Structure probing data (DMS) for a 177-nucleotide construct.
The reactions ran in a buffer of 150 mM KOAc, 10 mM MgCl2 and 150 mM bicine (pH 8.5), at 24 C.
[RMDB]
RNA sequence: GGGAACGACUCGAGUAGAGUCGAAAACUACAUAGUUUCGACUAUGUAGAAACCAUUAGGAAGCAUGCAGAUGCAUAUGGACCAGGGCAACUAACCUAUUGCGAACAGCAGGUUUCGACCUGCUGAAUGAGUUCAAGGCAUUCGUGCCUUGAACUCAAAAAGAAACAACAACAACAAC
Reactivity to DMS in 0.01 (KOAc 150mM, MgCl2 10mM, bicine 150mM(pH8.5), 24C), signal-to-noise 1, nucleotides 027 to 126: c000u000a000c010a000u000a010g000u000u000u000c180g000a040c010u000a010u050g000u000a000g010a070a060a060c030c010a040u010u000a210g040g030a110a100g040c020a010u000g040c160a040g030a020u000g040c030a140u000a060u000g000g010a120c010c060a030g000g000g010c070a020a060c080u020a110a060c030c030u000a120u000u000g110c040g010a060a250c010a010g010c000a000g060g000u010u000u000c110g010a030c000c000u000g000c000u000g000a060a070